[RMDB]
RNA sequence: GGGAACGACUCGAGUAGAGUCGAAAAGAUAUGGACGUACGGGUACCUUCAACAGCUCGGAAACGAGACAUGAAGUGUACUUACGUCCUAAGUCAAACGGUCUUAUACCUUCGGGUAUAAGACCGAACUCCAAAAAGUUGUUCGCAACUUUUUGGAGAAAAGAAACAACAACAACAAC
Reactivity to DMS in 0.01 (KOAc 150mM, MgCl2 10mM, bicine 150mM(pH8.5), 24C), signal-to-noise 2, nucleotides 027 to 126: g010a040u000a300u000g000g000a000c030g000u010a030c300g000g000g000u000a000c000c000u010u010c010a010a140c270a180g030c010u000c000g000g000a130a130a130c000g000a010g000a010c130a080u000g010a000a000g020u020g000u000a000c000u000u000a000c000g000u000c000c010u010a000a090g000u000c010a100a110a240c030g010g010u010c000u000u000a000u000a010c000c010u000u030c170g030g000g020u000a000u000a010a000g000a000c000c000g000a010a020
Reactivity to 2A3 in 0.01 (KOAc 150mM, MgCl2 10mM, bicine 150mM(pH8.5), 24C), signal-to-noise 1, nucleotides 027 to 126: g040a030u100a040u130g000g000a010c020g010u100a030c130g090g010g050u010a000c010c000u000u010c020a080a080c030a150g050c000u010c010g000g020a040a070a030c020g000a030g000a040c010a050u120g020a000a010g020u040g010u280a000c000u000u000a000c000g000u010c020c010u010a090a000g010u020c010a190a030a030c020g000g010u020c010u020u000a000u000a010c000c000u060u100c300g070g010g000u000a000u000a010a000g010a010c010c000g000a000a000